[RMDB]
Source information:
This 177-nucleotide RNA was probed chemically with 2A3 and DMS. For DMS, 1,032 sequencing reads were counted. DMS (dimethyl sulfate) methylates the pairing face of unpaired adenines and cytosines. The 2A3 profile rests on 1,111 reads. 2A3 adducts were read by reverse transcription with SuperScript II with manganese.

RNA sequence: GGGAACGACUCGAGUAGAGUCGAAAAUGAAACUAAUUCAAAAAGUGGUGAUGGGCUUAUUCAUCGGAUCUCUUUAUUGGCAACAACCACUUGAUCCUCGAGGAGUACGGAACACAAAUAGUGCUCACACUCCAUCCUCAUUCGUGAGGAUGGAGUGAAAAGAAACAACAACAACAAC
Reactivity to 2A3 in 0.01 (KOAc 150mM, MgCl2 10mM, bicine 150mM(pH8.5), 24C), signal-to-noise 1, nucleotides 027 to 126: u060g010a060a000a010c120u140a120a230u070u110c070a010a150a000a000a000g000u000g000g010u020g020a100u110g020g000g000c020u080u100a050u150u130c020a090u060c100g200g020a280u050c070u010c050u060u100u130a080u090u190g010g010c000a030a010c000a010a020c030c000a000c000u010u060g010a020u010c000c020u000c080g090a070g150g030a010g010u020a000c000g040g120a230a000c040a010c030a150a090a090u080a110g000u020g000c000u040c000a040
Reactivity to DMS in 0.01 (KOAc 150mM, MgCl2 10mM, bicine 150mM(pH8.5), 24C), signal-to-noise 2, nucleotides 027 to 126: u000g000a060a020a220c180u000a120a100u000u000c080a010a040a070a050a020g010u010g000g070u000g000a130u020g010g000g020c040u000u010a070u010u010c140a100u010c070g000g000a050u000c120u020c050u010u000u010a020u040u000g000g000c000a050a070c060a100a030c030c000a000c020u000u000g020a070u000c030c020u020c160g030a120g000g000a060g020u000a050c050g000g000a050a020c150a050c140a040a130a070u000a170g000u000g030c000u000c020a300